[RMDB]
The record gives the reactivity of an RNA of 177 nucleotides to 2A3 and DMS.
Reactivities are rounded to 0.1 and cut off at 0 and 3.
The reactions ran in a buffer of 150 mM KOAc, 10 mM MgCl2 and 150 mM bicine (pH 8.5), at 24 C.
For DMS, 2,149 sequencing reads were counted.

RNA sequence: GGGAACGACUCGAGUAGAGUCGAAAAUGACGUCGUUUCGACGACGUCAACAUAAAAUCAGCGGUAAAUAAUUAGGAGGCGUUACCGCUGAACGCCUCCAUUCGAGAGGGCUAUUCGUAGCCCUCAACUUCUAAGGACGGUUCGCCGUCCUUAGAAGAAAAGAAACAACAACAACAAC
Reactivity to 2A3 in 0.01 (KOAc 150mM, MgCl2 10mM, bicine 150mM(pH8.5), 24C), signal-to-noise 2, nucleotides 027 to 126: u050g000a010c000g010u010c000g030u020u040u180c200g070a010c010g000a000c000g000u010c000a000a010c020a040u200a000a160a010a070u030c000a000g000c010g140g160u230a020a060a050u100a090a110u190u230a170g020g020a000g020g000c000g000u020u010a100c020c000g000c000u010g000a000a010c000g000c010c020u000c000c000a040u110u170c140g030a120g000a010g030g010g010c000u010a020u070u110c170g070u020a000g000c020c010c000u000c010a010a000
Reactivity to DMS in 0.01 (KOAc 150mM, MgCl2 10mM, bicine 150mM(pH8.5), 24C), signal-to-noise 2, nucleotides 027 to 126: u000g020a010c000g020u000c000g020u000u000u010c180g010a030c010g020a010c000g000u000c000a020a020c170a110u010a060a030a070a150u010c010a010g010c000g020g000u010a010a020a020u000a040a040u010u010a130g000g010a010g000g000c020g000u000u010a070c030c000g020c000u000g000a000a030c010g010c000c000u000c010c030a150u020u020c130g000a170g010a030g010g010g000c000u010a010u000u020c140g020u000a010g010c000c000c010u000c000a000a070